Chemical mapping of a 177-nucleotide RNA with 2A3 and DMS. It was measured as part of the RMDB library TTRDES.
[RMDB]
RNA sequence: GGGAACGACUCGAGUAGAGUCGAAAAGAUAUGGACCACCCUUGACAUGUCGUGUACUCGGAAACGAGUACCCGACAACAGCAAGGUGGUCCUAAGUCAAAAGUCAACGGAGUUCGCUCCGUUGACACUUCAGCAAGUGGUUCGCCACUUGCUGAAGAAAAGAAACAACAACAACAAC
Reactivity to 2A3 in 0.01 (KOAc 150mM, MgCl2 10mM, bicine 150mM(pH8.5), 24C), signal-to-noise 1, nucleotides 027 to 126: g010a000u020a000u040g000g000a010c000c010a030c170c030c000u020u010g040a040c130a300u300g000u000c000g000u010g000u010a000c000u000c000g000g020a020a010a010c020g000a020g000u000a010c010c010c000g020a000c000a030a020c030a000g000c010a010a000g000g000u010g020g000u000c000c010u000a000a010g000u020c010a040a000a140a100g010u000c000a010a000c010g000g000a020g020u070u200c300g110c210u000c010c010g000u000u010g000a010c000a000
Reactivity to DMS in 0.01 (KOAc 150mM, MgCl2 10mM, bicine 150mM(pH8.5), 24C), signal-to-noise 1, nucleotides 027 to 126: g020a010u020a100u020g000g000a030c010c000a050c110c070c090u000u000g050a040c050a300u000g020u010c000g020u000g000u010a000c000u000c000g050g020a000a040a030c000g010a000g010u000a000c000c070c000g010a000c020a080a020c260a160g010c000a020a000g020g020u000g010g020u000c000c000u010a000a030g000u000c000a150a060a130a140g000u000c000a000a000c000g010g000a030g000u010u010c290g020c010u000c000c000g040u010u000g000a030c000a030